[RMDB]
RNA sequence: GGGAACGACUCGAGUAGAGUCGAAAAGAUAUGGAACGCGACGAUCUACAAGGUCGAAGAACUCGGAAACGAGGGAGACCGGGGUAGGGAGCGUUCCUAAGUCAAAAGAAGUGGUUCGCCACUUCAAGUCUGUAUUUCUGUUCGCAGAAAUACAGACAAAAGAAACAACAACAACAAC
Reactivity to 2A3 in 0.01 (KOAc 150mM, MgCl2 10mM, bicine 150mM(pH8.5), 24C), signal-to-noise 1, nucleotides 027 to 126: g010a000u090a060u140g020g010a010a000c000g060c020g120a300c040g020a130u010c010u020a020c020a080a060g000g000u020c000g080a100a020g000a020a010c000u020c000g010g010a030a120a100c010g000a000g020g020g000a020g000a010c010c060g010g010g110g020u020a030g020g030g010a000g000c000g000u000u000c010c000u010a030a000g010u000c030a020a030a000a170g020a020a000g000u010g060g020u050u150c250g050c090c000a000c040u030u000c000a000a010
Reactivity to DMS in 0.01 (KOAc 150mM, MgCl2 10mM, bicine 150mM(pH8.5), 24C), signal-to-noise 3, nucleotides 027 to 126: g010a030u000a300u010g010g010a020a000c000g030c000g000a080c210g010a010u000c000u000a010c000a180a120g010g000u000c000g050a050a130g020a140a200c000u000c010g010g000a100a080a200c020g000a020g000g000g010a120g010a020c010c000g000g020g020g000u000a010g000g000g000a030g010c000g000u010u000c000c000u000a000a040g000u010c030a110a080a120a100g000a020a010g020u000g000g000u000u010c220g000c000c000a010c000u000u000c010a060a110

This 177-nucleotide RNA was probed chemically with 2A3 and DMS. It was measured as part of the RMDB library TTRDEL. For DMS, 2,788 sequencing reads were counted. The RNA was probed in 150 mM KOAc, 10 mM MgCl2 and 150 mM bicine (pH 8.5) at 24 C. Values cover nucleotides 27 to 126.